The record gives the reactivity of an RNA of 177 nucleotides to DMS and 2A3. The DMS profile rests on 2,944 reads. The 2A3 profile rests on 6,543 reads. Source: RMDB library TTRDES, as collected in RNAgym.

[RMDB]
RNA sequence: GGGAACGACUCGAGUAGAGUCGAAAAGAUAUGGACGGUCUUGGACAUGCUAGCCAUUCGGAAACGAAUGUUGUUAGCAACAGCCAAGGACCGUCCUAAGUCAAAUCACACUCUUCGGAGUGUGAAAGAGAAUGGAACAGUUCGCUGUUCCAUUCUCAAAAGAAACAACAACAACAAC
Reactivity to DMS in 0.01 (KOAc 150mM, MgCl2 10mM, bicine 150mM(pH8.5), 24C), signal-to-noise 3, nucleotides 027 to 126: g000a030u000a290u010g010g000a020c000g010g020u000c000u000u000g000g010a070c100a260u010g030c010u000a010g000c000c030a010u000u000c000g020g000a100a070a140c000g010a020a010u000g000u020u000g030u000u000a010g030c010a040a080c260a230g000c010c000a020a030g000g030a020c000c000g000u010c010c000u000a000a050g020u000c040a100a130a220u000c000a000c000a010c010u000c000u000u010c200g020g010a010g010u020g000u020g000a010a070a110
Reactivity to 2A3 in 0.01 (KOAc 150mM, MgCl2 10mM, bicine 150mM(pH8.5), 24C), signal-to-noise 2, nucleotides 027 to 126: g000a000u020a000u090g000g000a010c010g000g010u000c020u000u010g000g010a050c050a280u300g000c000u000a000g010c000c000a010u000u010c010g050g000a040a030a010c010g000a000a010u050g040u210u170g010u160u000a000g040c010a020a020c080a030g030c000c000a040a030g080g030a000c000c000g010u000c000c020u000a000a000g010u020c010a000a000a080u050c000a000c000a000c020u010c010u060u100c300g180g000a010g000u010g010u000g000a000a000a000